[RMDB]
RNA sequence: GGGAACGACUCGAGUAGAGUCGAAAAGAUAUGGACCACGGGGACGCAACUACCCACCUCGGAAACGAGAGGUUGAACUACGUCAAGUGGUCCUAAGUCAAAACUUUUGUGGUUCGCCACAAAAGAAGUUCGUCCUAAUGUUCGCAUUAGGACGAACAAAAGAAACAACAACAACAAC
Reactivity to 2A3 in 0.01 (KOAc 150mM, MgCl2 10mM, bicine 150mM(pH8.5), 24C), signal-to-noise 1, nucleotides 027 to 126: g010a010u020a020u120g000g000a010c010c020a020c010g100g050g190g000a000c000g080c140a130a110c070u080a040c010c000c000a100c040c040u000c000g000g070a050a050a010c000g010a010g020a010g010g050u000u020g050a120a080c200u300a110c300g020u010c050a170a180g000u030g020g020u030c000c000u000a030a000g030u010c000a020a050a080a130c010u000u000u020u000g000u020g150g000u010u050c270g100c100c010a030c030a010a010a000a000g020a030a050
Reactivity to DMS in 0.01 (KOAc 150mM, MgCl2 10mM, bicine 150mM(pH8.5), 24C), signal-to-noise 1, nucleotides 027 to 126: g010a080u000a300u030g020g000a000c040c000a010c020g000g060g090g000a000c000g000c080a070a080c030u000a050c040c010c010a120c250c000u000c000g000g000a030a080a190c040g030a030g020a110g000g000u000u000g010a140a130c080u000a110c030g000u000c040a190a130g030u000g010g000u000c000c000u010a000a110g020u020c030a060a030a150a190c000u000u000u000u000g010u000g000g000u000u000c190g060c020c000a000c000a000a000a000a000g000a070a040

The record gives the reactivity of an RNA of 177 nucleotides to 2A3 and DMS. DMS adducts were read by reverse transcription with MarathonRT. The RNA was probed in 150 mM KOAc, 10 mM MgCl2 and 150 mM bicine (pH 8.5) at 24 C. Values cover nucleotides 27 to 126. Reactivities are rounded to 0.1 and cut off at 0 and 3.